[RMDB]
RNA sequence: GGGAACGACUCGAGUAGAGUCGAAAAGCGUACUGUGUCUGGUGGCGGCGUUCACCCAUCGAACGUAUCUCGAUGUGGUGGGGUUAGCCCUAGCAAUUGGGUUAUCCAUUUCAUGGGCUUUUAGUCUUUUAGUCGGCGCGGUUGAGUAUCAGCAGGCGAAAGUGUAAUUGUUCGCAAUUACACUUUCAAAAGAAACAACAACAACAAC
Reactivity to DMS in 0.01 (KOAc 150mM, MgCl2 10mM, bicine 150mM(pH8.5), 24C), signal-to-noise 1, nucleotides 027 to 156: g040c040g030u000a050c040u000g000u000g040u010c010u000g030g020u000g000g010c040g020g020c020g060u010u000c000a040c000c000c020a000u010c020g020a040a160c140g040u010a080u010c040u000c000g010a050u000g030u000g030g000u000g000g020g030g010u000u000a060g050c000c000c010u000a130g020c090a050a070u000u000g010g000g020u000u000a090u010c000c010a110u000u000u000c030a210u000g030g050g000c010u000u020u000u000a070g020u000c040u030u000u000u010a120g010u000c030g010g020c040g040c050g000g010u020u000g020a150g000u000a070u000c040a110g030c000a090g010g030c180
Reactivity to 2A3 in 0.01 (KOAc 150mM, MgCl2 10mM, bicine 150mM(pH8.5), 24C), signal-to-noise 3, nucleotides 027 to 156: g060c040g010u060a020c070u060g030u030g040u080c020u030g110g000u060g050g020c070g000g020c030g010u120u070c010a010c020c000c000a000u000c010g010a060a050c120g110u250a180u070c120u020c020g000a000u000g150u190g020g000u010g000g020g000g000u010u040a040g010c000c000c010u020a050g020c050a010a100u070u050g030g000g030u180u190a090u140c010c000a020u040u070u030c100a080u060g030g000g000c000u010u110u020u110a050g010u050c000u010u070u000u040a060g030u080c030g020g030c050g000c030g030g030u030u080g050a050g030u080a050u190c060a020g050c030a020g090g060c050